[RMDB]
An RNA of 177 nucleotides, treated with DMS and 2A3 and read out base by base. The RNA was probed in 150 mM KOAc, 10 mM MgCl2 and 150 mM bicine (pH 8.5) at 24 C. For 2A3, 1,368 sequencing reads were counted. DMS adducts were read by reverse transcription with MarathonRT. Reactivities are given for positions 27 through 126.

RNA sequence: GGGAACGACUCGAGUAGAGUCGAAAAUGACGUCGUUUCGACGACGUCAACAUAAAAUCAGCGGUAAAUAAUUAGGAGGCGUUACCGCUGAACGCCUCGAUACGAGAGGGCUAUUCGUAGCCCUCAAACAUCCCUUGCAGUUCGCUGCAAGGGAUGUAAAAGAAACAACAACAACAAC
Reactivity to DMS in 0.01 (KOAc 150mM, MgCl2 10mM, bicine 150mM(pH8.5), 24C), signal-to-noise 1, nucleotides 027 to 126: u000g000a020c020g010u000c000g090u000u000u010c240g070a040c000g000a010c000g000u010c000a000a100c210a100u020a040a060a050a070u000c020a020g010c000g000g000u010a050a020a040u010a030a120u000u030a090g020g010a010g000g000c010g010u010u010a060c040c000g030c000u000g000a000a030c020g000c000c000u000c010g000a100u020a130c160g000a150g040a030g000g020g020c020u010a030u000u000c200g000u000a030g000c010c000c000u000c030a010a020
Reactivity to 2A3 in 0.01 (KOAc 150mM, MgCl2 10mM, bicine 150mM(pH8.5), 24C), signal-to-noise 1, nucleotides 027 to 126: u050g000a000c000g010u000c020g000u000u030u090c190g090a010c000g010a000c010g010u020c000a000a000c000a020u240a020a130a040a090u020c010a000g010c010g000g070u120a040a070a050u110a080a110u190u100a150g230g000a000g000g000c000g020u000u040a080c000c000g000c000u000g010a000a000c000g000c020c000u000c000g040a070u080a130c190g020a130g000a020g230g000g000c020u000a010u020u040c140g000u020a010g000c000c000c030u000c000a000a000